[RMDB]
RNA sequence: GGGAACGACUCGAGUAGAGUCGAAAAGAUAUGGAUUGUAAGGCUGUAGCGCGUUGAAAAGGGGCAUCGUCGGAAACGACGAUGCCCCUUGGAGCGUCACAGCAGCAGCAGCUACAAUCCUAAGUCAGUACUGUAUUAACUUCGGUUAAUACAGUACAAAAGAAACAACAACAACAAC
Reactivity to DMS in 0.01 (KOAc 150mM, MgCl2 10mM, bicine 150mM(pH8.5), 24C), signal-to-noise 2, nucleotides 027 to 126: g010a050u010a300u000g000g000a030u010u010g010u020a020a160g020g000c000u010g010u000a190g010c000g000c010g020u010u010g000a150a060a020a000g040g010g000g000c000a000u000c000g020u000c000g020g000a080a060a240c000g020a030c030g010a020u000g010c010c010c000c000u000u000g000g000a140g020c010g010u010c100a050c070a050g000c050a080g040c060a050g020c160a060g000c060u000a010c010a000a020u000c010c000u010a030a080g000u010c040a170